An RNA of 177 nucleotides, treated with 2A3 and DMS and read out base by base. 2A3 adducts were read by reverse transcription with SuperScript II with manganese.
[RMDB]
RNA sequence: GGGAACGACUCGAGUAGAGUCGAAAAGAUGGCUCUAAAGACGUGUUCGUACACUUCUCUGCUAUCCAGAACGAUGGCUACAAAUCCCUGGACGAAGGUCAGAAAGUAUCCUUCACCAUCGAAAGCGUAUCCACUCCCAUUUCGAUGGGAGUGGAUAAAAAGAAACAACAACAACAAC
Reactivity to 2A3 in 0.01 (KOAc 150mM, MgCl2 10mM, bicine 150mM(pH8.5), 24C), signal-to-noise 5, nucleotides 027 to 126: g090a020u110g000g000c010u000c040u090a150a140a000g040a010c030g010u010g030u090u180c070g050u170a020c020a010c020u130u060c060u000c000u050g000c000u030a070u030c000c030a040g020a120a030c010g010a020u010g000g030c040u080a040c070a020a090a070u040c030c000c000u050g020g030a020c070g010a050a000g020g020u040c030a030g250a100a200a030g110u060a110u080c000c000u010u010c000a000c000c000a020u060c020g030a090a040a010g090c120g040
Reactivity to DMS in 0.01 (KOAc 150mM, MgCl2 10mM, bicine 150mM(pH8.5), 24C), signal-to-noise 3, nucleotides 027 to 126: g000a100u020g050g030c010u010c120u010a100a180a060g040a030c050g000u000g000u010u030c230g040u000a080c060a030c020u000u000c050u000c100u010g000c020u000a030u010c000c190a130g000a090a060c080g020a010u000g020g020c090u010a080c100a050a120a100u000c010c010c000u010g000g020a060c180g040a040a070g010g050u040c100a080g000a110a060a070g020u000a090u020c000c000u000u000c020a270c010c010a000u000c050g020a140a080a080g030c200g000

For DMS the reverse transcriptase was MarathonRT.
The reactions ran in a buffer of 150 mM KOAc, 10 mM MgCl2 and 150 mM bicine (pH 8.5), at 24 C.